Conditions: 150 mM KOAc, 10 mM MgCl2 and 150 mM bicine (pH 8.5), 24 C. The record gives the reactivity of an RNA of 177 nucleotides to 2A3 and DMS. It was measured as part of the RMDB libraries RFM100 and RFMREP. Values are in units of 0.01, from 0 to 300, in steps of 10.
RNA sequence: GGGAACGACUCGAGUAGAGUCGAAAAUGAUGAUCUGAUCUCCCAUAUCCUUGCUGGUUUGGAUUUUGAUUAUAAUCCUGUUGUGUCCUCGAUUACGGGACGCACUGAGUCUGUUUCCUUUGGUGAAACUGUUUGGACUUUUCGAAGUCCAAACAGUAAAAGAAACAACAACAACAAC
Reactivity to 2A3 in 0.01 (KOAc 150mM, MgCl2 10mM, bicine 150mM(pH8.5), 24C), signal-to-noise 2, nucleotides 027 to 126: u100g010a000u000g010a030u030c010u050g020a010u050c010u000c000c000c030a030u050a010u040c000c010u040u100g030c080u040g040g000u090u080u020g060g040a020u010u090u000u000g070a050u010u170a060u090a140a040u040c010c010u030g060u110u040g000u050g000u050c020c000u030c000g160a230u050u220a160c110g010g000g000a000c020g000c000a010c010u000g000a000g040u030c080u300g010u070u000u000c040c000u060u060u150g030g000u150g020a130a080
Reactivity to DMS in 0.01 (KOAc 150mM, MgCl2 10mM, bicine 150mM(pH8.5), 24C), signal-to-noise 2, nucleotides 027 to 126: u010g000a060u010g020a060u020c070u010g000a020u020c060u000c060c010c040a120u010a070u030c000c030u020u000g050c060u000g010g020u000u010u020g000g000a030u020u000u020u010g020a060u000u010a040u000a030a090u000c040c040u000g010u010u030g020u000g000u000c000c000u030c080g020a170u010u030a100c190g000g020g000a020c010g020c000a000c070u030g000a040g000u020c050u010g010u000u000u000c000c000u030u050u020g020g030u010g010a060a060